An RNA of 177 nucleotides, treated with 2A3 and DMS and read out base by base. The 2A3 profile rests on 2,077 reads. For DMS the reverse transcriptase was MarathonRT. It was measured as part of the RMDB library OK2TST. For 2A3 the reverse transcriptase was SuperScript II with manganese. The DMS profile rests on 1,696 reads.
RNA sequence: GGGAACGACUCGAGUAGAGUCGAAAAGGCCUGUAGUGAGGGAGAGGUUACUGUAGACAGAAGGAACUGUGCAGGCCAAAGGGUGGGAGGAAUAGUUCAGGAGUAGGGAGUCUUCAGGGACCACUGAGAUUCGGAAUAUUUUCGAAUAUUCCGAAUCAAAAGAAACAACAACAACAAC
Reactivity to 2A3 in 0.01 (KOAc 150mM, MgCl2 10mM, bicine 150mM(pH8.5), 24C), signal-to-noise 1, nucleotides 027 to 126: g030g000c020c000u030g050u050a120g040u050g150a090g000g020g060a080g000a030g120g000u060u060a070c020u070g060u090a030g030a090c040a010g070a100a040g090g030a050a020c000u030g000u040g050c020a020g000g020c000c020a050a030a000g080g050g060u260g050g000g030a090g020g040a090a080u050a150g040u090u060c040a040g050g000a060g060u080a060g020g040g020a070g000u000c020u030u010c020a010g020g040g000a020c020c070a040c050u050g040a060
Reactivity to DMS in 0.01 (KOAc 150mM, MgCl2 10mM, bicine 150mM(pH8.5), 24C), signal-to-noise 1, nucleotides 027 to 126: g020g020c020c000u000g010u000a080g020u010g000a100g060g020g020a130g000a080g020g000u000u000a060c060u000g000u010a090g020a120c110a110g010a110a100g000g000a070a080c030u000g010u000g020c040a020g010g010c040c030a040a100a140g010g030g030u000g010g000g020a100g020g010a070a060u000a060g010u000u000c080a120g010g000a090g010u010a100g000g000g010a110g010u000c040u000u000c060a060g020g010g000a050c040c050a110c130u000g010a230